[RMDB]
RNA sequence: GGGAACGACUCGAGUAGAGUCGAAAAUCCGGCGUAUUGCUGUGCACUACUUAGUACACGCGUAUCGGUUUGCACUCCAGAUGUAGCAAUUGAAAACGAAGAUAUUCCUGGAAAGUUUGCAACCGCGGCCUACGCAAGUGUUCGCACUUGCGUAGGCAAAAGAAACAACAACAACAAC
Reactivity to 2A3 in 0.01 (KOAc 150mM, MgCl2 10mM, bicine 150mM(pH8.5), 24C), signal-to-noise 2, nucleotides 027 to 126: u000c010c040g080g000c060g000u020a110u110u210g060c050u010g000u010g050c010a010c150u240a020c070u220u090a030g020u070a000c010a070c030g010c010g050u050a160u130c040g030g030u070u050u090g000c000a000c040u020c000c000a020g000a200u140g070u140a090g050c100a200a150u100u100g070a020a070a090a000c070g040a010a010g070a060u080a130u150u040c040c000u000g020g000a100a010a120g080u040u080u130g000c020a020a020c000c000g000c030g080
Reactivity to DMS in 0.01 (KOAc 150mM, MgCl2 10mM, bicine 150mM(pH8.5), 24C), signal-to-noise 1, nucleotides 027 to 126: u000c000c000g000g060c040g010u010a010u000u000g000c000u050g000u000g100c000a160c000u060a230c150u000u000a030g000u000a110c000a000c190g000c090g000u000a060u000c050g000g000u040u000u060g010c000a090c200u000c000c020a030g000a050u000g000u000a060g000c180a180a180u020u000g000a100a060a070a070c170g000a060a060g030a120u000a000u000u000c030c010u000g000g000a030a050a030g040u000u000u000g020c000a000a000c010c050g060c170g030
Chemical mapping of a 177-nucleotide RNA with 2A3 and DMS. As a SHAPE reagent, 2A3 marks flexible, mostly unpaired nucleotides at the ribose 2'-OH. Conditions: 150 mM KOAc, 10 mM MgCl2 and 150 mM bicine (pH 8.5), 24 C. Values cover nucleotides 27 to 126. For DMS, 1,076 sequencing reads were counted. For DMS the reverse transcriptase was MarathonRT.